[RMDB]
RNA sequence: GGGAACGACUCGAGUAGAGUCGAAAAGCAGUUGCAGAGUGUGAGGACUCUGAACUCGAAGGUAGAUGACCUCCUCACAGGUCAAAGUGAUAUUGAUAGGCAAGUAUCAGGAUCACACUACCGACAUACUUGUCUAUGUCAACUCGAGCAACUGAGAGGCCUAGUGAUGGUUCGCCAUCACUAGGCCAAAAGAAACAACAACAACAAC
Reactivity to 2A3 in 0.01 (KOAc 150mM, MgCl2 10mM, bicine 150mM(pH8.5), 24C), signal-to-noise 1, nucleotides 027 to 156: g110c000a000g010u000u010g000c000a000g010a000g060u050g020u010g000a010g020g050a040c000u010c010u180g050a060a010c090u090c100g120a090a060g020g020u150a000g010a140u060g020a020c000c030u020c000c000u030c010a000c030a000g000g030u050c090a120a130a130g030u130g030a020u020a060u070u100g050a020u010a010g020g100c090a100a010g020u000a000u010c050a010g060g020a060u050c040a050c030a060c150u020a100c010c010g020a050c000a010u000a000c070u100u000g070u060c050u020a000u040g000u030c010a110a100c050u000c000g100a080g010c000a000a000c000u000g030a010g090a070